This 177-nucleotide RNA was probed chemically with DMS and 2A3. In probing experiments dimethyl sulfate is read out at A N1 and C N3, which are open when not base-paired. The data come from the RNA Mapping Database (RMDB), library TTRDEL. For DMS the reverse transcriptase was MarathonRT. For 2A3 the reverse transcriptase was SuperScript II with manganese.

RNA sequence: GGGAACGACUCGAGUAGAGUCGAAAAGAUAUGGACCCUUCGUGCGAGGACAGACGAAUUCGGAAACGAACUAUCUGUCUACCCACCGCACAAGGGUCCUAAGUCAAAACGCCCGUUCGCGGGCGAACCUUUUAUGCUAGUUCGCUAGCAUAAAAGGAAAAGAAACAACAACAACAAC
Reactivity to DMS in 0.01 (KOAc 150mM, MgCl2 10mM, bicine 150mM(pH8.5), 24C), signal-to-noise 3, nucleotides 027 to 126: g000a020u010a300u010g000g020a000c020c000c000u000u010c290g020u000g000c000g000a130g000g000a030c000a000g010a020c140g030a050a170u000u010c000g010g020a110a050a170c010g010a010a040c070u000a220u000c010u010g000u010c000u000a020c020c030c080a300c150c010g000c000a000c000a010a000g000g000g000u000c000c000u000a000a040g010u000c020a050a070a100a160c040g010c010c010c010g020u000u010c110g000c000g000g000g020c010g000a030a020
Reactivity to 2A3 in 0.01 (KOAc 150mM, MgCl2 10mM, bicine 150mM(pH8.5), 24C), signal-to-noise 2, nucleotides 027 to 126: g010a030u030a040u110g010g000a000c000c010c020u000u040c150g000u000g010c010g000a050g060g000a010c000a010g000a010c070g180a150a300u060u010c020g020g020a030a040a030c000g000a010a020c030u040a140u120c010u030g020u000c000u020a020c000c010c030a060c030c000g000c000a000c000a000a000g000g000g010u000c000c000u000a000a010g010u000c000a020a010a090a120c020g000c000c000c000g010u060u050c260g030c040g100g000g000c000g000a010a010